[RMDB]
RNA sequence: GGGAACGACUCGAGUAGAGUCGAAAAGAUGAGAGUUGCACUGUCCUUAGACAGUGCGUUUGAAUCUCACUUCAAACAUUAUCCUUCUAAGGACAAUGUGAAGAGUGAGCUCUUCACGGCUGUCAUAGAUAGGUUUGAGAUUCGUUUCAGAUCUAUCAAAAGAAACAACAACAACAAC
Reactivity to 2A3 in 0.01 (KOAc 150mM, MgCl2 10mM, bicine 150mM(pH8.5), 24C), signal-to-noise 9, nucleotides 027 to 126: g120a050u160g030a020g010a000g060u070u140g020c030a010c040u010g020u030c020c010u040u030a070g000a000c000a000g000u080g130c000g000u000u010u030g020a000a030u300c000u000c010a000c000u030u030c020a030a020a010c000a000u010u020a020u040c010c000u040u140c070u180a100a070g000g000a000c000a010a000u020g000u000g060a110a030g010a010g010u020g020a010g010c000u000c000u000u000c000a000c000g010g000c010u010g000u030c000a030u030a040
Reactivity to DMS in 0.01 (KOAc 150mM, MgCl2 10mM, bicine 150mM(pH8.5), 24C), signal-to-noise 9, nucleotides 027 to 126: g000a080u010g010a080g000a060g010u000u020g000c010a020c020u000g000u000c020c240u020u040a100g010a000c010a010g010u000g000c000g010u010u000u020g010a040a010u030c010u000c010a020c030u010u000c030a070a260a030c030a020u000u000a130u000c000c000u000u020c160u020a090a060g000g000a010c020a010a030u000g000u000g000a160a150g000a010g010u010g000a040g000c020u000c000u000u000c000a010c150g000g010c040u000g000u000c000a050u010a050
Chemical mapping of a 177-nucleotide RNA with 2A3 and DMS.
For 2A3, 52,543 sequencing reads were counted.
The reactions ran in a buffer of 150 mM KOAc, 10 mM MgCl2 and 150 mM bicine (pH 8.5), at 24 C.
DMS adducts were read by reverse transcription with MarathonRT.
It was measured as part of the RMDB library OK1LIB.